An RNA of 177 nucleotides, treated with DMS and 2A3 and read out base by base.
RNA sequence: GGGAACGACUCGAGUAGAGUCGAAAAUUACUAGUGUGUGAUGAAUUGCUUUGACUUCUGACACCUCGUAUGAAAACUGCACGUGCAGUCUGAUUAUUUAGCAAGACUGAGGCUUAAAAUAAAUCAAUAGUAGCUUCUUAUUCGUAAGAAGCUACUAAAAAGAAACAACAACAACAAC
Reactivity to DMS in 0.01 (KOAc 150mM, MgCl2 10mM, bicine 150mM(pH8.5), 24C), signal-to-noise 4, nucleotides 027 to 126: u000u000a050c020u000a060g010u010g010u000g000u010g000a090u010g010a060a060u010u010g010c090u010u010u010g000a090c090u000u010c020u000g010a080c050a060c020c030u000c130g000u010a010u000g000a080a070a090a090c050u000g010c030a120c300g020u000g010c010a020g000u000c060u000g010a090u000u000a070u010u010u000a050g010c060a080a040g020a060c100u010g020a120g000g000c020u000u010a040a020a030a050u000a030a040a080u000c050a040a190
Reactivity to 2A3 in 0.01 (KOAc 150mM, MgCl2 10mM, bicine 150mM(pH8.5), 24C), signal-to-noise 2, nucleotides 027 to 126: u060u030a000c010u010a000g000u000g000u000g020u040g290a140u020g060a050a120u140u080g020c080u150u130u150g050a130c010u020u000c040u040g040a010c010a050c010c000u000c010g040u000a050u060g030a110a030a030a110c020u050g040c070a060c120g130u140g020c010a000g010u020c000u030g030a010u030u080a040u110u190u090a060g010c010a060a000g030a100c070u090g040a080g050g000c000u070u090a040a100a040a040u120a030a040a060u080c030a030a020
The reactions ran in a buffer of 150 mM KOAc, 10 mM MgCl2 and 150 mM bicine (pH 8.5), at 24 C.